[RMDB]
Structure probing data (2A3 and DMS) for a 207-nucleotide construct. For 2A3 the reverse transcriptase was SuperScript II with manganese. Reactivities are given for positions 27 through 156. The reactions ran in a buffer of 150 mM KOAc, 10 mM MgCl2 and 150 mM bicine (pH 8.5), at 24 C. The 2A3 profile rests on 1,651 reads.
RNA sequence: GGGAACGACUCGAGUAGAGUCGAAAAAAGCACUGCCAAUCUGUGAACUUGACAAGCGUCAAGGUAUGCUUAUCGACUUACUGGUCGAGAUGGUCAACAGCGAGACGUGUGAUGGCGAGCUAACCGAACUAAAUCAGGCACUUGAGCAUCAAGAUUGGUAAGCCACUUUUUUCGAAAAGUGGCUUACAAAAGAAACAACAACAACAAC
Reactivity to 2A3 in 0.01 (KOAc 150mM, MgCl2 10mM, bicine 150mM(pH8.5), 24C), signal-to-noise 3, nucleotides 027 to 156: a000a000g040c040a040c030u090g000c000c020a050a060u040c060u020g080u050g110a050a060c020u050u030g020a040c070a250a110g070c100g090u010c000a020a020g020g000u050a050u130g000c000u040u090a030u060c000g010a030c020u070u230a060c040u260g010g010u020c010g000a020g020a030u140g010g010u040c070a080a030c010a060g040c000g080a080g010a030c030g070u040g000u010g050a050u020g010g050c040g000a000g000c020u020a000a030c020c000g000a020a020c020u100a050a030a110u120c040a040g020g010c020a020c020u040u060g010a000g000c010a010u040c060a030a070g040a150u040u070g030
Reactivity to DMS in 0.01 (KOAc 150mM, MgCl2 10mM, bicine 150mM(pH8.5), 24C), signal-to-noise 1, nucleotides 027 to 156: a050a150g020c040a020c040u000g030c010c030a070a040u000c110u000g020u030g010a050a080c020u000u040g000a080c050a080a110g040c140g050u000c010a130a120g010g000u000a000u000g020c000u000u000a150u000c010g010a060c040u000u020a080c100u000g020g010u000c060g000a110g000a040u030g020g000u000c060a060a120c010a040g000c000g020a140g010a130c070g020u000g000u000g000a110u000g020g010c030g000a060g020c060u010a060a040c000c000g000a060a300c040u010a030a020a110u000c080a190g000g040c020a110c030u000u010g010a060g020c020a080u000c030a040a060g000a090u000u000g040